[RMDB]
RNA sequence: GGGAACGACUCGAGUAGAGUCGAAAACAUCGCAAGAGCGUGUGCGAUCACAGUGGCUUUUGUGGCGUGCUUUUAUGGACGUCAGCCCAUCGAAGAAUGUGUGAAGCAAACGGCUGACUGCACACGAGUGGGGAGUCCACUUCGGUGGACUCCCCACAAAAGAAACAACAACAACAAC
Reactivity to 2A3 in 0.01 (KOAc 150mM, MgCl2 10mM, bicine 150mM(pH8.5), 24C), signal-to-noise 2, nucleotides 027 to 126: c010a050u000c080g070c150a200a020g000a000g220c000g010u020g000u100g030c000g000a090u000c020a010c000a050g080u180g020g020c040u000u120u250u160g040u040g000g000c000g030u110g070c000u000u020u220u300a300u300g020g110a000c070g000u060c000a060g000c000c000c000a070u060c070g000a110a070g020a240a130u060g000u000g000u000g000a020a000g000c120a200a060a130c000g060g000c010u020g060a140c000u000g030c000a000c000a000c000g000a000